[RMDB]
Structure probing data (DMS and 2A3) for a 177-nucleotide construct. 2A3 adducts were read by reverse transcription with SuperScript II with manganese. The DMS profile rests on 29,459 reads. The RNA was probed in 150 mM KOAc, 10 mM MgCl2 and 150 mM bicine (pH 8.5) at 24 C. Reactivities are given for positions 27 through 126.
RNA sequence: GGGAACGACUCGAGUAGAGUCGAAAAAUCAGCUUCCUGUUGACAGGCAUGGAGAAAGGCUUUCUGCAGACCUUCCCUGCUCUUACUGGGAGGCACAAUGUCAGGUGAAAGUUACAGUUAGUGGGGACCUAAACCAAUUAUUCGUAAUUGGUUUAGGAAAAGAAACAACAACAACAAC
Reactivity to DMS in 0.01 (KOAc 150mM, MgCl2 10mM, bicine 150mM(pH8.5), 24C), signal-to-noise 9, nucleotides 027 to 126: a090u010c100a130g010c050u000u000c010c000u010g010u000u000g010a100c290a100g010g000c050a030u010g010g010a120g010a070a050a050g000g010c060u000u010u010c110u010g010c130a060g000a090c040c020u000u000c010c000c010u000g000c030u010c120u000u000a070c070u000g010g000g000a040g010g000c050a070c140a060a050u000g010u000c050a050g000g010u000g010a060a050a070g010u000u000a050c060a060g000u000u000a060g020u000g000g000g010g010a280
Reactivity to 2A3 in 0.01 (KOAc 150mM, MgCl2 10mM, bicine 150mM(pH8.5), 24C), signal-to-noise 8, nucleotides 027 to 126: a000u080c040a020g020c020u040u010c010c010u060g050u110u100g070a060c070a050g000g030c030a040u230g050g010a140g040a130a070a010g040g000c010u050u100u060c070u230g050c050a050g030a280c000c000u020u030c000c000c000u000g020c030u020c010u060u050a050c040u040g000g000g010a010g010g070c030a010c020a030a130u170g050u120c030a020g040g060u050g080a100a050a030g040u080u070a060c040a030g020u050u070a040g020u100g030g020g010g030a020